[RMDB]
RNA sequence: GGGAACGACUCGAGUAGAGUCGAAAAACAACAAGGGAUACAAUAUUUCCGCAUAUCAUGAAAUAUAUUAAGAAAUCCCACCUUAUUAUAUUUCCCCAAAGGAUCCAUGCACGUAAACAUUAUAUCGUAAUAGGUAUAGCUUCGGCUAUACCUAUUAAAAAGAAACAACAACAACAAC
Reactivity to DMS in 0.01 (KOAc 150mM, MgCl2 10mM, bicine 150mM(pH8.5), 24C), signal-to-noise 1, nucleotides 027 to 126: a060c080a060a020c130a060a100g020g000g040a020u010a070c050a030a040u000a080u000u000u000c040c040g030c070a030u010a050u010c070a060u010g000a060a020a000u000a000u000a010u010u010a020a020g020a100a120a070u000c010c000c000a130c180c000u000u000a000u010u010a000u010a010u000u000u000c020c140c110c090a060a050a090g000g000a050u000c090c040a030u000g000c020a030c100g000u020a020a060a050c060a020u000u000a020u000a030u000c080g020
The record gives the reactivity of an RNA of 177 nucleotides to DMS.
The DMS profile rests on 936 reads.
Conditions: 150 mM KOAc, 10 mM MgCl2 and 150 mM bicine (pH 8.5), 24 C.